This 207-nucleotide RNA was probed chemically with DMS and 2A3. The RNA was probed in 150 mM KOAc, 10 mM MgCl2 and 150 mM bicine (pH 8.5) at 24 C. Reactivities are given for positions 27 through 156. The 2A3 profile rests on 2,134 reads.
RNA sequence: GGGAACGACUCGAGUAGAGUCGAAAAACACCAAAACUGUAAACGGAAGGCAAUCCUUCCACGACGAUACUUACUUUCCUUUGAUCGUCGUUACUACUGGCAUAGCCACAAAGGAGAACAAACAUGAGCGCGGACACUGACUUCGGUCAGUGUCCAAGUAAAAAUUAUCCUUCGGGAUAAUUUUUACAAAAGAAACAACAACAACAAC
Reactivity to DMS in 0.01 (KOAc 150mM, MgCl2 10mM, bicine 150mM(pH8.5), 24C), signal-to-noise 1, nucleotides 027 to 156: a090c040a160c020c020a070a080a030a100c120u000g010u030a060a110a100c050g020g010a050a000g060g030c070a200a140u000c000c000u000u000c000c040a090c000g040a040c010g030a080u010a050c050u000u010a050c090u000u010u000c020c010u010u000u010g020a020u000c030g010u000c000g000u000u010a030c040u010a140c060u000g020g020c030a140u000a090g060c040c000a110c100a000a070a060g010g000a040g000a100a120c100a040a090a140c050a080u000g000a170g040c100g030c080g050g040a040c010a000c000u000g000a030c000u010u010c300g030g020u000c020a020g020u000g000u010c000c010a010a060
Reactivity to 2A3 in 0.01 (KOAc 150mM, MgCl2 10mM, bicine 150mM(pH8.5), 24C), signal-to-noise 4, nucleotides 027 to 156: a000c080a080c010c040a070a070a070a030c080u190g060u300a110a110a090c090g020g010a010a010g020g000c120a060a170u270c000c000u000u010c010c000a000c010g010a000c000g000a000u060a150c020u110u030a020c020u080u190u110c020c000u070u010u030g030a000u020c000g000u000c000g000u030u090a020c020u020a010c010u010g020g000c070a280u140a150g030c000c000a040c050a030a050a020g060g010a040g020a100a020c040a110a140a020c070a160u230g070a090g160c140g000c100g070g000a000c000a000c000u000g000a000c010u060u040c170g040g000u000c010a000g000u000g010u000c000c000a000a000